An RNA of 207 nucleotides, treated with DMS and 2A3 and read out base by base. Reactivities are given for positions 27 through 156. The reactions ran in a buffer of 150 mM KOAc, 10 mM MgCl2 and 150 mM bicine (pH 8.5), at 24 C.
RNA sequence: GGGAACGACUCGAGUAGAGUCGAAAAUAUACGCUGGGUAGAUGUUUAGUUGCACGGAGGGAGAUCUCCUGAAGCGCGCACGGGAGAUCAUCGAUCUCCGUGGCACUCUAACAUCUACCUGUGCUGAAGCGCGCACGGCAACCGAAAGGUGCGGAAACAACUGAAGACUGUUCGCAGUCUUCAGUUGAAAAGAAACAACAACAACAAC
Reactivity to DMS in 0.01 (KOAc 150mM, MgCl2 10mM, bicine 150mM(pH8.5), 24C), signal-to-noise 2, nucleotides 027 to 156: u010a110u010a060c010g040c010u000g020g030g040u000a030g000a020u000g010u000u000u000a080g030u000u010g060c030a040c020g020g000a170g010g000g010a040g000a020u000c000u000c010c030u000g030a050a050g020c010g020c010g000c010a300c030g000g010g030a030g010a050u000c010a120u010c200g000a070u000c010u000c000c000g010u010g000g070c040a100c220u000c040u000a030a040c010a020u000c010u000a030c020c010u000g030u000g010c000u000g000a080a030g030c000g030c020g030c010a300c020g000g020c000a030a090c020c000g010a080a120a120g010g000u000g000c000g020g000a180a130a230
Reactivity to 2A3 in 0.01 (KOAc 150mM, MgCl2 10mM, bicine 150mM(pH8.5), 24C), signal-to-noise 2, nucleotides 027 to 156: u190a000u020a030c010g000c010u010g000g000g000u010a000g000a020u010g120u040u200u140a160g040u180u190g020c000a000c000g000g000a000g000g000g000a020g000a000u000c000u020c010c000u030g050a150a070g010c000g000c000g010c020a010c000g010g000g010a010g020a000u000c010a010u300c010g000a000u000c000u000c000c000g010u010g000g000c020a070c060u170c000u020a010a000c000a000u000c010u000a000c000c000u000g000u000g000c000u010g010a150a020g000c010g010c000g000c000a000c000g020g000c010a010a010c000c010g020a050a040a020g010g000u000g010c000g000g000a070a060a010